Source: RMDB library RFM100, as collected in RNAgym. The record gives the reactivity of an RNA of 177 nucleotides to DMS and 2A3. For 2A3 the reverse transcriptase was SuperScript II with manganese. The 2A3 profile rests on 1,945 reads. Reactivities are given for positions 27 through 126. High 2A3 reactivity points to a flexible backbone, as in loops and unpaired stretches. Conditions: 150 mM KOAc, 10 mM MgCl2 and 150 mM bicine (pH 8.5), 24 C.
[RMDB]
RNA sequence: GGGAACGACUCGAGUAGAGUCGAAAACCACCGCUUUUCGUCAAGAAACAGAAACCGCAACAGGGUGUCGCAGUAAUAAUCUUUCAGAAAGCGGGCAGUUUUAUGCCUGAUAUUACACCACGCUUUCCAGGACAUUUCUGUUCGCAGAAAUGUCCUGAAAAGAAACAACAACAACAAC
Reactivity to DMS in 0.01 (KOAc 150mM, MgCl2 10mM, bicine 150mM(pH8.5), 24C), signal-to-noise 1, nucleotides 027 to 126: c000c020a300c090c070g000c000u020u000u000u030c000g030u000c080a080a030g010a050a090a140c140a090g010a140a130a000c040c100g020c150a020a050c100a070g000g000g030u000g000u000c080g040c100a050g000u000a060a050u050a120a030u000c040u000u010u000c080a120g000a000a040a000g000c000g030g000g000c140a030g000u000u000u020u030a070u030g000c000c040u000g000a100u000a000u030u010a040c080a210c050c020a190c050g020c020u000u000u000c000
Reactivity to 2A3 in 0.01 (KOAc 150mM, MgCl2 10mM, bicine 150mM(pH8.5), 24C), signal-to-noise 4, nucleotides 027 to 126: c010c000a010c000c010g020c020u010u030u110u080c030g090u030c080a100a090g020a090a110a010c040a020g100a100a080a020c030c030g030c020a050a080c020a120g020g030g090u060g010u030c010g000c050a020g010u020a040a000u080a050a040u040c040u010u090u030c010a020g020a040a020a010g030c000g010g010g020c030a000g020u040u110u060u150a030u060g060c000c000u030g040a050u040a070u100u110a060c030a010c020c020a060c040g040c010u020u000u000c010